[RMDB]
RNA sequence: GGGAACGACUCGAGUAGAGUCGAAAAGAUAUGGACCAGCAACAGCUACAGGGUCGGAAACGACCCGUAGACAUGCUGCGUCCUAAGUCAAAACGUCUAGCAGUUUGUUCGCAAACUGCUAGACGAAGCUAACUUUGAACUUCGGUUCAAAGUUAGCAAAAGAAACAACAACAACAAC
Reactivity to 2A3 in 0.01 (KOAc 150mM, MgCl2 10mM, bicine 150mM(pH8.5), 24C), signal-to-noise 1, nucleotides 027 to 126: g040a000u050a060u160g010g000a000c000c000a000g000c010a000a110c000a190g040c010u000a020c080a300g030g000g000u020c020g020g000a030a120a010c000g000a010c000c000c000g040u010a000g000a000c010a050u050g000c010u000g020c080g010u010c000c000u030a070a000g060u030c030a060a040a140a040c010g010u000c010u000a000g020c020a010g010u000u020u040g100u070u150c300g000c220a030a000a000c000u000g000c000u000a010g010a000c000g010a000a010
Reactivity to DMS in 0.01 (KOAc 150mM, MgCl2 10mM, bicine 150mM(pH8.5), 24C), signal-to-noise 1, nucleotides 027 to 126: g030a070u010a300u010g010g000a020c020c000a020g020c000a020a050c300a180g000c020u000a000c010a150g010g030g020u010c000g020g000a110a110a180c010g020a010c010c000c000g000u000a000g000a040c090a190u000g000c000u000g000c170g010u010c000c000u000a000a050g000u010c020a060a110a110a250c020g000u000c000u000a000g010c010a010g000u000u000u000g000u010u020c280g020c000a000a010a000c000u000g010c000u000a000g010a000c000g000a020a040